[RMDB]
RNA sequence: GGGAACGACUCGAGUAGAGUCGAAAAGGGGUCUAUCCGAAUGCGCUUAUUGGAGCAACAGCUUGCUGAAGCCUCCACGGCAAGACAUGCUCAGGAGCGAGGUAGAUAGACGGAGGCACCCAAAACAAGGUUAGCUGAUUCGUCAGCUAACCUUGAACCGUGUUUAUAAGUUCGCUUAUAAACACGGAAAAGAAACAACAACAACAAC
Reactivity to 2A3 in 0.01 (KOAc 150mM, MgCl2 10mM, bicine 150mM(pH8.5), 24C), signal-to-noise 8, nucleotides 027 to 156: g060g010g040g020u010c010u010a000u030c030c040g150a210a200u300g080c030g000c040u120u160a160u220u300g260g020a030g010c030a030a120c040a140g090c010u010u000g000c010u010g010a090a020g000c000c000u000c000c010a020c010g000g000c000a010a000g040a070c060a110u210g000c000u040c090a100g100g100a020g000c010g010a010g040g090u060a040g010a020u020a000g000a010c020g000g000a010g000g000c010a050c000c010c010a030a090a020a050c010a000a000g010g000u000u000a000g000c000u000g000a020u040u110c260g040u020c110a000g000c000u000a000a000c000c020u000u010g000a000a000
Reactivity to DMS in 0.01 (KOAc 150mM, MgCl2 10mM, bicine 150mM(pH8.5), 24C), signal-to-noise 3, nucleotides 027 to 156: g010g000g020g040u000c010u010a010u000c000c000g010a060a100u010g010c010g040c040u000u000a140u000u010g050g010a140g020c000a040a100c080a100g030c020u000u000g020c000u010g010a030a110g000c030c020u010c010c010a210c000g020g000c000a020a030g010a080c070a180u000g010c000u010c030a090g000g000a040g060c010g010a070g010g010u010a040g000a050u000a040g000a090c030g010g000a030g130g020c020a210c020c030c020a070a060a130a220c010a010a010g010g010u000u010a020g020c010u020g010a080u000u000c300g030u010c000a000g000c000u000a000a000c000c000u010u000g010a050a120